Structure probing data (2A3 and DMS) for a 177-nucleotide construct. For DMS, 1,642 sequencing reads were counted. In probing experiments dimethyl sulfate is read out at A N1 and C N3, which are open when not base-paired. It was measured as part of the RMDB library M2PK90. For 2A3, 1,157 sequencing reads were counted.

[RMDB]
RNA sequence: GGGAACGACUCGAGUAGAGUCGAAAAUAAAACAUGGUUACCAUAAACUAAGCGUGAAGGUAGCCAUGCACGCUUAGUUAAAUAUAAAAGCUGAGGGUUAGGAAAAACCUAAUGCUCAGCAAAAAAACAUAUUAGAGUGGUUCGCCACUCUAAUAUGAAAAGAAACAACAACAACAAC
Reactivity to 2A3 in 0.01 (KOAc 150mM, MgCl2 10mM, bicine 150mM(pH8.5), 24C), signal-to-noise 1, nucleotides 027 to 126: u080a000a040a030a000c040a070u060g020g050u080u110a040c000c000a020u070a130a090a000c010u020a040a020g030c000g020u000g000a020a010g100g040u080a010g080c010c000a000u020g040c000a000c010g040c010u030u070a020g010u020u130a120a230a020u230a020u060a070a120a030a000g030c010u000g000a000g000g080g010u000u000a000g000g000a100a120a040a100a010c000c000u010a010a000u040g090c010u000c000a000g040c000a020a020a020a020a000a020a020
Reactivity to DMS in 0.01 (KOAc 150mM, MgCl2 10mM, bicine 150mM(pH8.5), 24C), signal-to-noise 2, nucleotides 027 to 126: u010a050a090a130a090c120a070u000g000g000u000u000a070c030c010a100u000a080a130a010c000u020a020a050g010c090g000u000g010a160a110g000g020u000a030g010c060c060a020u000g000c000a030c030g000c010u000u000a010g000u000u010a060a120a070u000a070u000a050a100a110a110g010c010u000g000a000g010g010g010u000u000a010g010g000a120a110a130a130a100c020c010u010a000a000u000g000c000u000c000a000g020c010a010a000a030a010a010a060a060
2A3 adducts were read by reverse transcription with SuperScript II with manganese.